RNA sequence: GGGAACGACUCGAGUAGAGUCGAAAAUGUCUUGAAGGUCGAGGGAAUGACCUCAGCCUGCCACUGAGGGCUAACUGUGGCGUGAGUGUUGGCUCCAGGAGGUGCCAGUGGGAGGGCACUGGAGAGGAGGCAACACAUCGUUCGCGAUGUGUUGCCUAAAAGAAACAACAACAACAAC
Reactivity to 2A3 in 0.01 (KOAc 150mM, MgCl2 10mM, bicine 150mM(pH8.5), 24C), signal-to-noise 6, nucleotides 027 to 126: u070g040u000c020u050u090g050a070a030g030g020u080c050g020a040g020g050g050a220a300u190g070a120c000c000u010c000a010g000c000c020u060g040c010c000a050c020u030g030a160g030g080g030c040u040a050a010c020u050g020u050g080g000c050g060u120g050a100g010u140g050u100u150g060g000c000u000c010c010a030g020g060a060g080g000u030g100c020c000a010g020u050g030g050g030a110g020g010g000c030a010c030u030g020g020a050g000a010g060g060
Reactivity to DMS in 0.01 (KOAc 150mM, MgCl2 10mM, bicine 150mM(pH8.5), 24C), signal-to-noise 6, nucleotides 027 to 126: u000g010u010c040u000u000g010a220a090g020g000u000c090g010a070g010g010g010a140a100u010g010a100c010c010u010c020a110g010c040c020u000g000c030c050a150c020u000g000a120g020g000g010c040u000a040a140c050u000g000u000g000g000c030g020u000g010a100g020u000g010u010u000g010g000c000u000c050c010a040g000g010a220g000g020u000g010c020c020a070g010u010g000g000g010a140g000g000g010c050a030c020u020g000g000a210g000a070g010g010